[RMDB]
Structure probing data (DMS and 2A3) for a 177-nucleotide construct. Source: RMDB library OK2TRN, as collected in RNAgym. DMS (dimethyl sulfate) methylates the pairing face of unpaired adenines and cytosines. The DMS profile rests on 1,928 reads.
RNA sequence: GGGAACGACUCGAGUAGAGUCGAAAAAGCCUGUGUCGAGUAUUCUGUGGAAUUGUUUCCAUCAAUUUGGUAGAUCAUGAUAUAAGGCAGAACACUGAGAGUUUCACCAAACUAGGGCAACCAAAUCCAUAGCGUUACGUUUCGACGUAACGCUAUGAAAAGAAACAACAACAACAAC
Reactivity to DMS in 0.01 (KOAc 150mM, MgCl2 10mM, bicine 150mM(pH8.5), 24C), signal-to-noise 3, nucleotides 027 to 126: a130g020c040c000u000g010u000g010u000c050g010a090g050u030a040u020u000c040u010g020u010g050g010a020a090u010u000g020u000u010u000c050c060a060u000c080a100a100u000u000u030g010g040u000a060g000a020u010c060a150u020g010a050u010a090u020a130a080g010g010c020a040g000a030a070c050a030c040u000g000a130g000a050g000u000u000u000c080a080c110c050a050a030a080c100u000a130g000g000g000c040a060a120c030c030a050a060a070u000c130
Reactivity to 2A3 in 0.01 (KOAc 150mM, MgCl2 10mM, bicine 150mM(pH8.5), 24C), signal-to-noise 2, nucleotides 027 to 126: a010g030c010c000u020g090u060g030u060c030g090a000g050u030a100u170u060c050u060g080u040g060g070a060a030u060u070g060u070u120u050c030c000a010u000c020a060a130u070u070u150g020g010u020a030g010a100u020c020a060u110g040a000u050a010u020a150a040g030g000c030a020g030a040a010c030a000c060u090g040a050g020a020g190u020u070u070c020a020c060c040a060a000a000c050u110a060g040g060g000c000a000a030c030c010a030a060a040u070c040